An RNA of 177 nucleotides, treated with DMS and read out base by base. Values cover nucleotides 27 to 126. DMS adducts were read by reverse transcription with MarathonRT.
[RMDB]
RNA sequence: GGGAACGACUCGAGUAGAGUCGAAAAGAUAUGGAGCGACUGGAGCGAGAAAAGGUACUCGGAAACGAGUAUACUUGUCGCGUUGAAAGUCGCUCCUAAGUCAAACUCCAGGGUUCGCCCUGGAGAACCUAUUGCACCUCUUCGGAGGUGCAAUAGGAAAAGAAACAACAACAACAAC
Reactivity to DMS in 0.01 (KOAc 150mM, MgCl2 10mM, bicine 150mM(pH8.5), 24C), signal-to-noise 2, nucleotides 027 to 126: g000a000u000a300u000g000g000a010g020c000g000a030c000u000g000g000a120g000c010g000a020g000a080a000a010a020g010g000u000a000c000u000c000g020g000a090a080a200c010g000a030g000u000a000u000a010c000u000u000g000u010c000g000c000g010u000u030g000a260a050a030g010u000c000g010c010u000c000c020u000a000a080g010u000c040a110a180a180c010u000c000c000a030g000g010g010u000u000c270g010c010c000c000u000g000g000a000g000a030a100